[RMDB]
RNA sequence: GGGAACGACUCGAGUAGAGUCGAAAAAGCGAGUACCUACUCGUCGAAAAGACGAGUACUCCGCGCGCAAAGUACUCGCAGCUCAGAAAUCAAAGUAUCCGAUAAGGAUACGCGCGCGGACUGAGCACGAGCUGAUUAUCUUCGGAUAAUCAGCUCGAAAAGAAACAACAACAACAAC
Reactivity to 2A3 in 0.01 (KOAc 150mM, MgCl2 10mM, bicine 150mM(pH8.5), 24C), signal-to-noise 2, nucleotides 027 to 126: a020g000c000g000a000g000u020a020c000c000u000a000c000u000c010g000u030c010g030a120a090a090a090g000a000c000g020a000g000u000a000c000u000c000c000g000c010g000c000g020c090a090a100a040g000u000a000c000u000c000g010c000a000g030c000u070c020a040g070a080a200a100u280c080a090a100a000g000u000a000u000c010c000g110a200u090a300a090g000g000a000u000a000c000g000c020g000c000g000c010g000g010a000c060u090g040a060g030c100a080